[RMDB]
RNA sequence: GGGAACGACUCGAGUAGAGUCGAAAACAACACGUCCUCGUCGUACAGAGUGGUAACAUGUGUCAACACAUAUCCAAGCUUGGGUACACGGGCUUGACCCAACCCCUUGGGCGGAUGGUGGCACAUGAAAAGAAGUAACACUUCGGUGUUACUUCAACUGUCGUUUGGAGUUCGCUCCAAACGACAGAAAAGAAACAACAACAACAAC
Reactivity to 2A3 in 0.01 (KOAc 150mM, MgCl2 10mM, bicine 150mM(pH8.5), 24C), signal-to-noise 1, nucleotides 027 to 156: c070a040a000c020a040c120g150u120c020c020u040c030g140u040c030g010u140a070c130a060g070a040g060u080g080g060u140a030a010c000a000u000g000u000g040u030c040a170a160c100a040c060a110u120a020u070c000c000a000a000g000c020u000u000g000g000g000u000a020c020a010c040g000g000g030c000u180u300g150a300c000c000c000a010a030c000c000c000c000u010u000g000g000g000c020g000g000a000u000g010g010u020g010g000c010a000c000a000u040g000a000a000a000a000g000a000a000g000u000a000a000c000a000c020u010u090c140g060g000u000g000u010u010a000c020u000u010c000a000a000